The record gives the reactivity of an RNA of 177 nucleotides to 2A3 and DMS. The data come from the RNA Mapping Database (RMDB), library RFM100.
RNA sequence: GGGAACGACUCGAGUAGAGUCGAAAAACCGGUCCUACUCCCCAAGAGGCCAUCCCCAAGGGAGCUCAUGCUGCGGGGCCCUGAGCAAGCCCUCUGCUGGCGCCUAUCAAACGACACAGGCCUGAUCCAUUGCGAGGACAUUCGUGUCCUCGCAAUGAAAAGAAACAACAACAACAAC
Reactivity to 2A3 in 0.01 (KOAc 150mM, MgCl2 10mM, bicine 150mM(pH8.5), 24C), signal-to-noise 5, nucleotides 027 to 126: a000c010c010g000g000u040c010c010u030a090c030u030c020c010c000c000a060a010g040a040g090g010c000c000a070u060c010c000c000c010a060a080g030g040g010a080g000c050u070c060a060u150g020c030u030g030c050g030g010g020g000c000c020c000u070g010a060g010c010a030a010g010c010c000c000u020c020u030g010c000u020g020g010c010g060c010c010u080a110u130c060a110a050a040c050g060a020c030a010c010a090g040g000c000c010u060g030a070u020c010
Reactivity to DMS in 0.01 (KOAc 150mM, MgCl2 10mM, bicine 150mM(pH8.5), 24C), signal-to-noise 2, nucleotides 027 to 126: a100c060c000g040g000u000c010c020u010a110c070u000c000c000c050c040a050a100g000a110g000g020c050c020a120u000c000c000c010c020a110a140g000g020g010a060g000c000u040c060a050u030g000c020u040g010c130g000g010g010g000c000c050c050u010g040a090g000c230a160a150g000c040c030c000u010c050u010g000c010u000g000g020c020g010c000c020u030a160u030c100a060a060a050c100g000a090c110a090c100a070g000g000c000c010u000g000a100u020c030

The reactions ran in a buffer of 150 mM KOAc, 10 mM MgCl2 and 150 mM bicine (pH 8.5), at 24 C. 2A3 adducts were read by reverse transcription with SuperScript II with manganese. For DMS, 2,297 sequencing reads were counted. Reactivities are rounded to 0.1 and cut off at 0 and 3.